[RMDB]
Background:
Chemical mapping of a 207-nucleotide RNA with 2A3 and DMS. Conditions: 150 mM KOAc, 10 mM MgCl2 and 150 mM bicine (pH 8.5), 24 C. 2A3 adducts were read by reverse transcription with SuperScript II with manganese.
RNA sequence: GGGAACGACUCGAGUAGAGUCGAAAAUCUUGGCUCACUGUAACCUCCAACUCCCUGGUUCAGGAGAUUCUCCUGCCUCAGGCUCCCGAGUAGCUGGGAUUAUAGGCAUGUGCCAUCACACUCAGCUAAAUUUUUGCAUUUUUAGUAGAGACCAGGACAUGAUAUUUAUAUUCGUAUAAAUAUCAUGAAAAGAAACAACAACAACAAC
Reactivity to 2A3 in 0.01 (KOAc 150mM, MgCl2 10mM, bicine 150mM(pH8.5), 24C), signal-to-noise 4, nucleotides 027 to 156: u010c000u000u010g000g000c000u010c030a040c030u040g060u130a100a090c030c030u050c070c000a050a060c040u040c020c010c000u010g000g030u010u040c010a020g010g030a030g060a180u260u120c020u000c040c010u010g010c000c000u010c000a010g030g020c070u080c040c050c020g030a030g030u020a000g010c000u010g000g000g020a040u090u060a060u080a100g040g010c060a060u200g160u280g060c000c010a010u060c020a030c010a020c010u010c010a000g000c010u020a040a080a150u100u150u080u100u130g020c010a030u030u000u040u090u200a020g000u030a050g000a010g020a060c010c010a010g000g010a000
Reactivity to DMS in 0.01 (KOAc 150mM, MgCl2 10mM, bicine 150mM(pH8.5), 24C), signal-to-noise 3, nucleotides 027 to 156: u000c020u000u010g010g010c020u000c030a130c040u000g020u000a040a070c030c010u010c010c030a050a090c030u010c050c030c010u000g020g020u000u030c040a050g020g010a080g010a220u000u000c050u010c020c020u000g020c050c040u000c020a050g020g040c040u000c020c020c030g010a120g000u000a030g020c030u000g030g010g020a130u000u000a080u000a100g060g010c060a150u000g010u000g030c020c020a070u010c070a100c100a120c010u000c010a180g030c010u000a010a030a090u010u010u000u000u000g010c070a130u010u020u000u000u000a080g010u000a130g010a060g010a060c020c010a030g010g010a250